[RMDB]
RNA sequence: GGGAACGACUCGAGUAGAGUCGAAAAAGCCGUACGCACUACGGUGCGUACGGCAACGAUGUUCCGCUGCAAUGAAGAGAUCAUUGGCAUGAACAUCUGACACCUGACCUAUACGUAGGUCAGGUGAAACCAUGCAUUGUUUCGACAAUGCAUGGUUAAAAGAAACAACAACAACAAC
Reactivity to DMS in 0.01 (KOAc 150mM, MgCl2 10mM, bicine 150mM(pH8.5), 24C), signal-to-noise 2, nucleotides 027 to 126: a050g000c010c000g040u000a010c020g010c020a000c000u010a100c170g040g030u000g040c000g020u010a000c000g020g000c000a010a010c080g000a020u000g000u000u000c000c030g010c030u000g000c000a010a000u000g000a030a180g000a180g010a130u000c030a000u000u000g000g010c110a010u010g000a030a000c010a000u010c000u010g020a230c020a010c000c000u000g000a000c000c000u000a050u010a090c160g040u010a000g010g000u000c000a000g010g010u000g010a020
Reactivity to 2A3 in 0.01 (KOAc 150mM, MgCl2 10mM, bicine 150mM(pH8.5), 24C), signal-to-noise 2, nucleotides 027 to 126: a000g000c000c000g000u010a010c030g000c000a010c030u060a060c300g090g000u000g000c000g000u000a000c000g000g000c000a010a010c000g000a000u000g000u000u000c010c020g000c020u000g000c010a020a010u030g000a070a080g110a070g050a300u070c000a000u000u010g140g020c020a000u120g000a000a000c010a010u000c050u070g030a020c000a000c010c000u010g010a000c000c000u030a020u010a090c260g110u050a060g000g000u010c000a000g000g010u000g010a000
An RNA of 177 nucleotides, treated with DMS and 2A3 and read out base by base. The data come from the RNA Mapping Database (RMDB), libraries RFM100 and RFMREP.